[RMDB]
RNA sequence: GGGAACGACUCGAGUAGAGUCGAAAAAAAAAGCCAGGCCGUCAUAAAAGCACAAGCCAAUGUGCUUCCCUCUAAAGAGGUUGACGGCGAGCGGUAUCAUGCUGAAAGGAAGCAGGGGUACCGCAGACGCCGACCAUCCCCAAAGCGGGAGGAAAAAGAAUACAAUGUUGUUCGCAACAUUGUAUUCAAAAGAAACAACAACAACAAC
Reactivity to 2A3 in 0.01 (KOAc 150mM, MgCl2 10mM, bicine 150mM(pH8.5), 24C), signal-to-noise 3, nucleotides 027 to 156: a000a000a000a000a000g070c010c010a010g020g000c000c000g000u000c000a010u000a000a010a000a000g000c000a000c010a010a020g010c010c010a010a030u010g010u000g000c020u000u000c010c000c000u000c010u130a200a220a050g000a010g000g000u010u010g000a000c000g000g000c000g000a000g010c010g010g000u000a000u000c000a010u000g000c000u060g060a140a120a160g130g110a090a010g020c000a000g030g050g000g000u000a000c000c010g000c000a010g030a010c090g060c050c020g060a070c030c010a180u040c010c000c010c010a130a200a050g110c240g030g000g040a020g020g060a060a050a030a000a010
Reactivity to DMS in 0.01 (KOAc 150mM, MgCl2 10mM, bicine 150mM(pH8.5), 24C), signal-to-noise 2, nucleotides 027 to 156: a040a080a120a120a090g000c070c040a060g000g050c010c000g040u000c010a050u000a030a010a010a030g060c000a000c010a040a020g020c080c190a210a190u000g030u000g000c010u000u000c090c000c000u020c020u010a110a110a150g010a010g000g000u000u000g000a010c010g020g000c010g030a030g040c020g030g020u000a010u000c020a040u010g000c000u000g000a210a120a270g030g000a250a040g020c020a010g010g020g030g050u000a000c000c010g010c000a040g000a130c030g030c030c010g010a110c030c030a150u010c020c000c040c020a070a130a180g020c110g000g000g000a180g000g010a050a050a080a060a210
Record summary: Structure probing data (2A3 and DMS) for a 207-nucleotide construct. 2A3 adducts were read by reverse transcription with SuperScript II with manganese. The reactions ran in a buffer of 150 mM KOAc, 10 mM MgCl2 and 150 mM bicine (pH 8.5), at 24 C. For DMS the reverse transcriptase was MarathonRT. For DMS, 4,579 sequencing reads were counted.